[RMDB]
RNA sequence: GGGAACGACUCGAGUAGAGUCGAAAAGAUAUGGACGUGACGGUUUCAACAGCACGUCACUCGGAAACGAGUGCGUGACAUGAAACCGUCACGUCCUAAGUCAAAGGUGGCCCUUCGGGGCCACCAACACCUUAAUAAUCUUCGGAUUAUUAAGGUGAAAAGAAACAACAACAACAAC
Reactivity to DMS in 0.01 (KOAc 150mM, MgCl2 10mM, bicine 150mM(pH8.5), 24C), signal-to-noise 3, nucleotides 027 to 126: g010a030u000a300u010g000g010a010c000g020u000g010a010c000g010g010u000u010u010c000a030a050c280a200g000c010a000c000g010u020c010a000c000u000c000g000g000a100a110a200c020g010a020g020u000g010c040g010u000g000a020c100a150u000g000a000a010a000c000c000g000u000c000a000c000g020u010c010c010u000a000a050g010u000c040a090a100a150g000g010u000g000g010c000c000c000u000u020c250g030g000g000g050c000c000a000c000c000a030a090
The data come from the RNA Mapping Database (RMDB), library TTRDES. An RNA of 177 nucleotides, treated with DMS and read out base by base. Reactivities are given for positions 27 through 126. The reactions ran in a buffer of 150 mM KOAc, 10 mM MgCl2 and 150 mM bicine (pH 8.5), at 24 C.